[RMDB]
RNA sequence: GGGAACGACUCGAGUAGAGUCGAAAAAGACGGAAACCCAUUGACUGUCACCAGAUGCUGCAUCACCUGAUCACUGAUGGCUCAACGGUAUCCGGCGGUACAACUGAAUACUUGUAGCUGCCUUUUGAAAAGGAGUUCAUCUUCGGAUGAACUCCAACACAACCUAGCUGUUCGCAGCUAGGUUGUGAAAAGAAACAACAACAACAAC
Reactivity to 2A3 in 0.01 (KOAc 150mM, MgCl2 10mM, bicine 150mM(pH8.5), 24C), signal-to-noise 2, nucleotides 027 to 156: a010g080a040c070g030g010a040a000a010c020c000c010a020u000u040g050a050c080u080g010u010c000a010c030c000a040g030a110u080g060c050u120g000c030a120u080c000a080c040c010u040g030a030u100c020a000c030u030g050a040u010g090g000c020u060c010a030a050c040g070g000u000a110u010c030c000g010g000c020g040g020u000a020c010a030a000c050u160g070a120a080u100a120c020u040u030g030u030a060g100c040u030g040c000c000u130u070u110u240g070a080a070a110a080g000g000a010g000u000u000c000a000u000c000u060u040c170g080g000a000u000g000a000a000c000u000c000c000a000a000